[RMDB]
RNA sequence: GGGAACGACUCGAGUAGAGUCGAAAAGCUUGUGUGCGACACGAUUUUCGCCAAGUUCAGCGCGAACAUUAUGCCAAAGCUGUGCAACACCUUCGAAGCACACGAUUCCACAGCUGUCCUGCUGGCGGGCGGAGGAGUAUUUCGAUACUCCUCCGCCAAAAGAAACAACAACAACAAC
Reactivity to 2A3 in 0.01 (KOAc 150mM, MgCl2 10mM, bicine 150mM(pH8.5), 24C), signal-to-noise 4, nucleotides 027 to 126: g040c030u150u150g020u030g000u010g060c060g060a030c020a020c240g050a030u090u010u020u040c000g000c000c010a170a120g100u180u120c110a030g010c020g040c030g150a030a000c000a080u080u160a070u240g010c010c000a060a010a160g050c060u040g000u040g030c080a090a050c000a070c060c000u090u210c100g060a080a010g000c020a000c000a000c080g080a120u180u040c010c000a000c000a020g020c010u040g030u120c000c000u050g030c010u020g030g070c030g040
Reactivity to DMS in 0.01 (KOAc 150mM, MgCl2 10mM, bicine 150mM(pH8.5), 24C), signal-to-noise 1, nucleotides 027 to 126: g040c120u000u000g000u060g080u000g000c200g010a010c120a140c150g000a060u000u010u000u000c040g000c000c020a000a150g000u000u150c230a210g000c100g030c020g000a000a050c010a090u000u000a140u000g050c000c010a070a070a090g000c010u010g010u000g000c070a020a120c060a120c030c080u060u120c020g000a010a270g000c000a060c000a090c160g000a260u000u000c110c000a080c090a000g000c000u000g000u040c000c030u040g000c080u000g000g010c130g000